[RMDB]
RNA sequence: GGGAACGACUCGAGUAGAGUCGAAAAUACUGCCGCAGGGAAUAAACCACCACGACUUACCGCAAUAAUCCCUUUCCAUUGUGAUGCAGGUAAUAAACGCUUUGCUAAUUUGCGUGCGUGCAUAUGGACUAGAUGAGGCAUUCGUGCCUCAUCUAGUAAAAGAAACAACAACAACAAC
Reactivity to DMS in 0.01 (KOAc 150mM, MgCl2 10mM, bicine 150mM(pH8.5), 24C), signal-to-noise 2, nucleotides 027 to 126: u000a120c040u000g010c050c020g000c070a040g010g000g000a060a100u030a040a050a140c100c040a060c030c020a080c070g000a080c080u000u010a070c040c020g060c110a050a050u000a090a110u010c010c010c010u000u010u000c010c010a030u000u000g020u010g010a090u000g000c030a010g000g020u000a000a050u000a060a120a070c180g010c050u000u000u010g020c040u020a070a140u000u000u000g000c000g030u000g020c020g020u000g010c040a060u000a020u000g020g000
Reactivity to 2A3 in 0.01 (KOAc 150mM, MgCl2 10mM, bicine 150mM(pH8.5), 24C), signal-to-noise 2, nucleotides 027 to 126: u070a040c030u000g030c000c010g110c030a030g000g000g110a020a100u140a190a090a050c010c020a010c050c000a000c020g070a040c040u040u050a010c020c030g020c040a030a100u170a090a070u120c000c000c000u010u030u020c010c000a030u030u100g030u070g070a040u070g000c000a030g120g000u030a020a050u090a090a140a020c070g000c030u170u100u230g000c010u090a160a120u140u110u100g040c080g060u000g000c000g020u010g000c010a050u110a040u150g060g040